Chemical mapping of a 207-nucleotide RNA with DMS and 2A3.
[RMDB]
RNA sequence: GGGAACGACUCGAGUAGAGUCGAAAAAACUCAGCUAGGGAGAGUAUAACAUUCAUGUUGACGAGACCUAGACGACACACAGAGGAAAAUUAUUAAUCACUGGAUAGUAUUAGUAAUGACUCUGUGUAAAACUCUUCUACGUUCGCGUAGAAGAGAAGAUUGUUAUAUUCUUCGGAAUAUAACAAUCAAAAGAAACAACAACAACAAC
Reactivity to DMS in 0.01 (KOAc 150mM, MgCl2 10mM, bicine 150mM(pH8.5), 24C), signal-to-noise 3, nucleotides 027 to 156: a060a070c020u000c020a070g010c030u000a010g020g010g000a220g020a230g010u000a060u000a040a010c040a080u000u000c140a100u010g010u000u000g010a130c020g010a300g000a070c010c000u000a080g010a280c130g020a230c120a050c000a020c010a010g000a030g010g010a110a120a140a030u000u000a010u000u010a000a010u000c100a100c020u000g030g030a160u010a080g020u000a050u000u000a010g000u000a020a020u010g010a200c000u000c000u000g000u000g010u000a010a030a050a130c010u000c000u000u000c000u000a000c010g040u010u000c300g020c040g020u000a000g000a000a020g010a020g030a040a080
Reactivity to 2A3 in 0.01 (KOAc 150mM, MgCl2 10mM, bicine 150mM(pH8.5), 24C), signal-to-noise 7, nucleotides 027 to 156: a000a000c020u010c010a000g020c000u010a000g000g020g000a050g010a030g060u110a130u100a300a020c060a030u140u240c070a080u260g030u040u040g050a040c030g020a010g040a070c000c000u010a030g020a070c010g080a000c000a000c000a000c000a050g010a010g000g040a080a190a070a010u010u010a000u000u000a000a000u020c040a010c010u030g080g090a140u300a300g000u010a000u000u000a000g000u000a000a010u020g030a020c000u000c000u000g000u000g000u000a000a000a000a000c000u010c000u000u000c000u000a000c000g030u000u040c190g000c000g110u000a000g000a000a000g000a000g010a000a010
Conditions: 150 mM KOAc, 10 mM MgCl2 and 150 mM bicine (pH 8.5), 24 C.
For 2A3, 6,523 sequencing reads were counted.
For DMS, 5,707 sequencing reads were counted.